[RMDB]
RNA sequence: GGGAACGACUCGAGUAGAGUCGAAAAGAUAUGGAGGUCUGUGCGCCUCAACAGCUCGGAAACGAGACAUGAGGGCACUGGACCUCCUAAGUCAAAAGAAGUGAGACAGUUCGCUGUCUCACUUCAAGUAGUAUGUAUGGUUCGCCAUACAUACUACAAAAGAAACAACAACAACAAC
Reactivity to DMS in 0.01 (KOAc 150mM, MgCl2 10mM, bicine 150mM(pH8.5), 24C), signal-to-noise 9, nucleotides 027 to 126: g010a030u000a300u010g000g000a010g010g010u000c000u000g010u000g000c000g010c000c000u000c000a020a070c240a190g010c000u000c000g000g000a110a100a210c000g010a010g000a040c090a190u000g000a010g010g000g000c000a000c000u010g030g000a010c010c000u000c000c000u000a010a050g010u000c040a090a070a150a130g000a020a010g010u000g000a010g010a010c000a010g010u000u010c250g020c000u000g000u000c000u000c000a000c000u000u000c000a030a090
Reactivity to 2A3 in 0.01 (KOAc 150mM, MgCl2 10mM, bicine 150mM(pH8.5), 24C), signal-to-noise 6, nucleotides 027 to 126: g020a000u070a040u120g000g000a000g000g030u000c010u030g020u020g010c120g300c070c010u020c010a010a040c060a010g040c000u000c000g020g020a070a080a040c010g000a000g020a010c010a020u100g000a010g000g010g000c010a010c020u020g000g000a000c010c000u000c000c000u000a010a000g000u010c000a000a000a000a160g000a010a000g010u010g010a010g010a010c010a000g000u120u240c290g090c150u000g000u000c000u000c000a000c000u000u000c000a000a000